[RMDB]
An RNA of 177 nucleotides, treated with 2A3 and DMS and read out base by base. For 2A3, 4,350 sequencing reads were counted. In probing experiments dimethyl sulfate is read out at A N1 and C N3, which are open when not base-paired. Conditions: 150 mM KOAc, 10 mM MgCl2 and 150 mM bicine (pH 8.5), 24 C. The data come from the RNA Mapping Database (RMDB), library OK1LIB. Values are in units of 0.01, from 0 to 300, in steps of 10.
RNA sequence: GGGAACGACUCGAGUAGAGUCGAAAAAUCUAACCUUGAUCUCAAAUCCUAUUUGGUAUCAAUUCGAGCUCUAAACUUUUAUUAUCUUACCAAGUAGACUGUGGUUAUUGAUAAUGAUUGAUUAAGGCAAUACGGGUACGUUCGCGUACCCGUAUUGAAAAGAAACAACAACAACAAC
Reactivity to 2A3 in 0.01 (KOAc 150mM, MgCl2 10mM, bicine 150mM(pH8.5), 24C), signal-to-noise 7, nucleotides 027 to 126: a010u050c060u040a040a070c010c000u010u020g020a020u010c020u020c060a060a060a060u080c030c060u100a070u060u020u020g000g000u040a020u080c040a020a030u140u130c090g040a030g030c040u040c030u170a090a130a050c000u000u030u030u020a050u070u020a040u060c020u020u010a000c010c000a040a020g020u030a070g200a180c150u140g050u080g170g060u110u130a130u130u150g030a010u010a090a050u040g040a030u050u040g020a040u050u030a040a020g030g000
Reactivity to DMS in 0.01 (KOAc 150mM, MgCl2 10mM, bicine 150mM(pH8.5), 24C), signal-to-noise 3, nucleotides 027 to 126: a040u040c030u020a080a130c030c030u000u000g000a000u010c010u000c050a050a080a070u030c150c040u000a050u000u000u020g010g000u010a010u030c160a030a070u000u010c060g000a030g000c000u010c110u000a040a050a140c010u000u000u050u000a010u020u000a010u030c050u000u010a020c000c000a000a040g000u010a060g000a100c230u010g000u000g000g000u010u010a030u030u040g010a020u000a050a050u000g000a010u000u000g000a040u000u010a060a060g000g000